[RMDB]
RNA sequence: GGGAACGACUCGAGUAGAGUCGAAAAGAUCCAGAUGUUGGAGCAGCGAGCGGGGGAGGACAAUUUUAAGCGCCUGCUCAGCCGAAUUGUCAGGGCCUCCUGCCAGCCUGCCACUGCCCAGGGUGCCUCCAGGAAGUUAGUUCGCUAACUUCCUGGAAAAAGAAACAACAACAACAAC
Reactivity to DMS in 0.01 (KOAc 150mM, MgCl2 10mM, bicine 150mM(pH8.5), 24C), signal-to-noise 1, nucleotides 027 to 126: g000a110u000c000c010a090g000a010u000g000u020u000g030g020a140g020c050a050g010c040g000a220g010c040g000g010g010g000g020a140g020g010a050c030a020a030u020u000u010u010a160a220g020c130g030c070c060u020g030c050u000c090a140g050c050c060g010a050a040u000u000g000u000c040a120g000g020g030c060c050u000c000c010u020g010c020c020a160g010c030c040u010g000c040c070a070c050u050g000c040c030c000a090g000g010g020u000g020c120c060